Structure probing data (2A3 and DMS) for a 177-nucleotide construct.
It was measured as part of the RMDB libraries RFM100 and RFMREP.
The RNA was probed in 150 mM KOAc, 10 mM MgCl2 and 150 mM bicine (pH 8.5) at 24 C.
[RMDB]
RNA sequence: GGGAACGACUCGAGUAGAGUCGAAAACACGUUGAGGUGUCCCGUGCGAAGGGCUCAGCGUGGUGAUGAUGGGCACGAUCCGCUUUUAGCCGGGUUAGCCGUUCAGUGAUCGGCGUCCGAGAGUUGCGAUUAAGUGGCUUUUCGAAGCCACUUAAUCAAAAGAAACAACAACAACAAC
Reactivity to 2A3 in 0.01 (KOAc 150mM, MgCl2 10mM, bicine 150mM(pH8.5), 24C), signal-to-noise 6, nucleotides 027 to 126: c000a000c010g010u000u000g020a020g060g090u160g160u120c010c010c010g030u150g070c100g150a170a140g020g000g000c000u000c000a000g000c000g000u010g000g040u040g010a050u050g010a030u080g000g010g000c030a020c070g020a020u020c030c040g040c100u070u120u050u170a070g050c040c010g030g000g000u100u100a060g040c010c000g010u050u050c060a060g010u030g120a040u020c000g000g010c060g030u020c010c020g020a020g010a010g090u080u060g030c040
Reactivity to DMS in 0.01 (KOAc 150mM, MgCl2 10mM, bicine 150mM(pH8.5), 24C), signal-to-noise 4, nucleotides 027 to 126: c010a010c010g000u000u010g010a020g010g020u040g010u040c010c010c020g000u010g010c200g000a130a130g010g000g010c000u000c010a010g000c010g020u000g010g010u010g010a080u020g010a100u010g010g010g000c020a070c090g000a020u010c010c020g020c050u010u030u030u040a090g020c120c020g000g000g000u000u010a120g000c010c000g000u000u010c100a100g020u000g010a070u000c000g010g010c060g010u000c020c000g000a130g010a110g020u000u000g010c140
Annotation:
For DMS the reverse transcriptase was MarathonRT.